[RMDB]
RNA sequence: GGGAACGACUCGAGUAGAGUCGAAAAUACACUAAGGUGAUUGUUUCCAUCUCGAGAUCAGCUGAUUAGUUGCCUUAAUCACAUCUACAGUCUUAAUUCCCUUUCACCAUGUAACGUAGUAUAUUCACAGGUUUUGAGGAUUAUGACGUGGACAUCAAUAAAUCGUGAGUUUCGACUCACGAUUUAUAAAAGAAACAACAACAACAAC
Reactivity to 2A3 in 0.01 (KOAc 150mM, MgCl2 10mM, bicine 150mM(pH8.5), 24C), signal-to-noise 6, nucleotides 027 to 156: u130a020c050a010c070u080a100a080g070g010u050g020a130u040u040g030u040u040u000c030c020a070u040c060u040c060g140a120g020a120u080c060a030g040c050u040g010a130u070u090a010g040u080u140g050c010c010u030u090a050a040u080c030a020c010a090u000c010u050a020c030a060g010u000c010u010u060a050a040u130u230c000c000c000u010u040u020c040a020c020c020a100u060g030u040a060a020c110g040u020a040g080u030a200u070a070u270u160c090a040c040a060g010g030u040u040u060u050g070a070g010g010a010u000u010a010u060g000a000c010g010u010g010g030a020c020a090u100c040a110
Reactivity to DMS in 0.01 (KOAc 150mM, MgCl2 10mM, bicine 150mM(pH8.5), 24C), signal-to-noise 4, nucleotides 027 to 156: u010a100c060a110c070u010a060a130g050g040u000g000a110u000u000g000u010u000u010c020c020a130u000c080u000c030g010a120g030a090u000c060a170g000c050u000g000a080u010u000a130g010u000u010g010c040c060u000u000a070a130u000c070a070c080a100u000c010u000a050c020a080g010u000c030u000u000a050a110u000u010c000c010c000u000u020u010c070a080c020c020a050u000g000u010a050a070c080g040u000a110g030u010a110u000a080u000u000c020a060c020a070g020g010u000u010u000u000g000a060g010g020a060u000u000a030u010g020a050c030g010u000g010g010a040c050a100u000c070a110
Chemical mapping of a 207-nucleotide RNA with 2A3 and DMS. The reactions ran in a buffer of 150 mM KOAc, 10 mM MgCl2 and 150 mM bicine (pH 8.5), at 24 C. DMS adducts were read by reverse transcription with MarathonRT. For 2A3, 4,193 sequencing reads were counted. 2A3 adducts were read by reverse transcription with SuperScript II with manganese.